An RNA of 177 nucleotides, treated with DMS and 2A3 and read out base by base. The 2A3 profile rests on 1,051 reads. For 2A3 the reverse transcriptase was SuperScript II with manganese. For DMS the reverse transcriptase was MarathonRT. Conditions: 150 mM KOAc, 10 mM MgCl2 and 150 mM bicine (pH 8.5), 24 C.
[RMDB]
RNA sequence: GGGAACGACUCGAGUAGAGUCGAAAAGGACAUGACUAUGCUAAUGGGGAGACUAGUCUAGAAUCAAGUAUAAUGAUAUUAGUUAGAGAAUAUCUUAAUGCAACUAUACAAGGCCGGGAAACAUUAGACAGCACAGAUAAUUCGUUAUCUGUGCUGUAAAAGAAACAACAACAACAAC
Reactivity to DMS in 0.01 (KOAc 150mM, MgCl2 10mM, bicine 150mM(pH8.5), 24C), signal-to-noise 3, nucleotides 027 to 126: g030g000a060c070a080u020g030a060c060u000a100u000g010c030u000a060a070u010g020g000g010g010a110g000a070c060u000a020g010u000c010u000a060g000a130a110u000c100a050a150g000u010a040u020a040a050u000g000a040u000a020u000u000a070g010u000u010a130g020a180g000a030a030u020a030u000c000u000u000a050a060u000g010c050a080a080c060u000a040u010a060c050a060a100g010g000c050c020g000g000g000a080a030a080c090a060u000u000a100g000
Reactivity to 2A3 in 0.01 (KOAc 150mM, MgCl2 10mM, bicine 150mM(pH8.5), 24C), signal-to-noise 1, nucleotides 027 to 126: g030g000a030c020a120u090g000a050c010u050a040u210g040c010u070a160a070u180g000g000g050g000a040g000a030c020u000a040g020u000c000u020a050g030a100a110u110c050a150a000g020u020a020u030a120a170u090g000a030u010a010u050u070a010g040u070u170a070g020a050g050a210a010u040a020u000c000u030u100a060a030u050g010c000a040a090c040u020a040u010a230c010a030a140g030g000c010c060g060g010g080a070a050a000c010a000u120u090a080g000